[RMDB]
RNA sequence: GGGAACGACUCGAGUAGAGUCGAAAACUGCCUCAUCCCUGCAUCUACUGCUGGUACCUGCCAUGAGAGUACUGAACACAUGGGUUUGAGGGUGUGGGCUUUCAUUUAAAACCCCAAGAUGUGGGAGAUGCACUUGAGUAUUCGUACUCAAGUGCAUAAAAGAAACAACAACAACAAC
Reactivity to DMS in 0.01 (KOAc 150mM, MgCl2 10mM, bicine 150mM(pH8.5), 24C), signal-to-noise 4, nucleotides 027 to 126: c090u000g020c030c020u010c040a080u000c030c000c020u030g000c070a050u000c030u000a090c130u000g010c060u000g010g010u000a040c040c050u010g030c090c110a060u000g000a060g010a110g010u000a060c070u010g010a060a060c120a110c080a060u000g000g010g030u000u020u010g010a080g010g010g030u000g020u010g020g000g000c050u000u010u020c100a120u000u010u010a040a060a050a150c050c010c020c080a100a090g000a050u000g000u020g000g000g010a100g010
Reactivity to 2A3 in 0.01 (KOAc 150mM, MgCl2 10mM, bicine 150mM(pH8.5), 24C), signal-to-noise 4, nucleotides 027 to 126: c000u050g030c010c020u040c000a070u050c020c000c010u020g030c010a020u000c040u130a100c050u070g130c000u070g050g000u040a050c000c010u070g110c020c020a100u130g040a030g010a000g110u070a090c080u080g130a120a010c060a010c000a140u080g020g010g090u060u090u080g070a050g010g020g000u030g020u010g030g070g000c050u060u100u090c010a080u050u100u210a100a120a070a100c020c000c020c010a020a030g080a110u060g040u090g060g010g020a140g010
Chemical mapping of a 177-nucleotide RNA with DMS and 2A3. The data come from the RNA Mapping Database (RMDB), library OK2TST. The reactions ran in a buffer of 150 mM KOAc, 10 mM MgCl2 and 150 mM bicine (pH 8.5), at 24 C. DMS adducts were read by reverse transcription with MarathonRT.